[RMDB]
Chemical mapping of a 207-nucleotide RNA with DMS and 2A3.

RNA sequence: GGGAACGACUCGAGUAGAGUCGAAAAGUUUGGGUAUGCCUCGCUGCCCAAAUGAAAUUUAGAGGAUAAGGCAUUGGUUGGUGGUUCAGGUCUUGCCAAUGCUCGAAAACCAAAGGCUGAAAUAAGCAUGUAGAAAGCGUAUGGUUUCCUUGUGCGGGAUACCAGACUUGUUCGCAAGUCUGGUAUCAAAAGAAACAACAACAACAAC
Reactivity to DMS in 0.01 (KOAc 150mM, MgCl2 10mM, bicine 150mM(pH8.5), 24C), signal-to-noise 1, nucleotides 027 to 156: g020u000u000u000g000g010g050u000a040u020g070c020c010u000c060g000c240u000g090c020c000c000a010a010a040u000g020a050a060a120u000u000u020a030g030a120g010g010a100u000a180a110g020g000c010a080u000u000g020g040u000u000g000g030u000g020g000u010u010c070a100g040g000u000c010u010u030g040c000c020a020a040u000g000c050u000c000g010a040a030a070a100c120c080a010a080a070g060g000c000u000g000a050a070a100u010a060a080g020c010a130u010g000u010a080g020a050a010a040g010c040g000u010a140u010g010g040u000u000u010c010c000u020u000g050u000g000c130g000g010
Reactivity to 2A3 in 0.01 (KOAc 150mM, MgCl2 10mM, bicine 150mM(pH8.5), 24C), signal-to-noise 4, nucleotides 027 to 156: g000u010u010u000g010g000g010u020a040u130g030c030c000u040c070g000c000u000g000c000c000c000a000a010a010u040g000a010a050a020u210u290u150a060g010a020g020g020a020u040a050a030g020g010c010a000u000u010g000g030u010u070g020g030u030g030g060u090u080c040a050g020g090u030c010u030u040g030c010c000a020a010u020g000c010u000c010g000a010a000a000a000c020c010a060a020a010g060g020c020u040g060a040a030a070u190a120a030g010c040a030u100g040u100a040g050a110a090a010g010c010g040u090a080u140g030g000u010u010u040c010c000u070u070g050u060g030c070g010g060
Record summary
For DMS, 2,355 sequencing reads were counted. For 2A3, 3,229 sequencing reads were counted. It was measured as part of the RMDB library RSTRND. The reactions ran in a buffer of 150 mM KOAc, 10 mM MgCl2 and 150 mM bicine (pH 8.5), at 24 C.